Source: RMDB libraries RFM100 and RFMREP, as collected in RNAgym. Structure probing data (2A3 and DMS) for a 177-nucleotide construct. Conditions: 150 mM KOAc, 10 mM MgCl2 and 150 mM bicine (pH 8.5), 24 C.
RNA sequence: GGGAACGACUCGAGUAGAGUCGAAAAACAACAAUCACACGCGCACACUUCCACCAUUAUCAUCUAUCCACCACACAGGUUCGUCGGAUGCGAAACGGUGGUGUUCAGGGCUUUUUUAAGGUUGCUGCUCAGAGUAGUGUUUCGACACUACUCUGAGAAAAGAAACAACAACAACAAC
Reactivity to 2A3 in 0.01 (KOAc 150mM, MgCl2 10mM, bicine 150mM(pH8.5), 24C), signal-to-noise 5, nucleotides 027 to 126: a000c060a010a010c030a030a070u080c020a030c000a000c030g010c000g000c000a010c000a010c050u090u000c020c020a010c020c010a070u050u060a080u170c040a000u000c020u060a050u040c030c000a010c000c000a030c010a010c010a060g020g080u040u040c020g050u040c100g140g050a080u200g010c010g030a020a020a010c010g020g010u020g000g010u010g010u070u050c030a030g000g010g050c020u090u040u030u010u040u100a070a050g090g000u010u030g010c020u030g010
Reactivity to DMS in 0.01 (KOAc 150mM, MgCl2 10mM, bicine 150mM(pH8.5), 24C), signal-to-noise 3, nucleotides 027 to 126: a060c100a070a050c110a060a060u040c040a110c040a040c070g010c020g030c030a060c080a080c020u000u000c060c040a110c010c080a030u010u020a080u050c120a090u000c060u010a110u010c150c040a060c030c020a050c100a070c070a180g000g000u000u000c040g000u010c140g020g000a080u040g000c030g010a030a040a080c090g000g000u000g030g000u010g000u010u020c080a030g010g020g000c020u010u010u000u040u030u020a040a070g030g010u000u020g030c040u000g040

Source information
For DMS the reverse transcriptase was MarathonRT.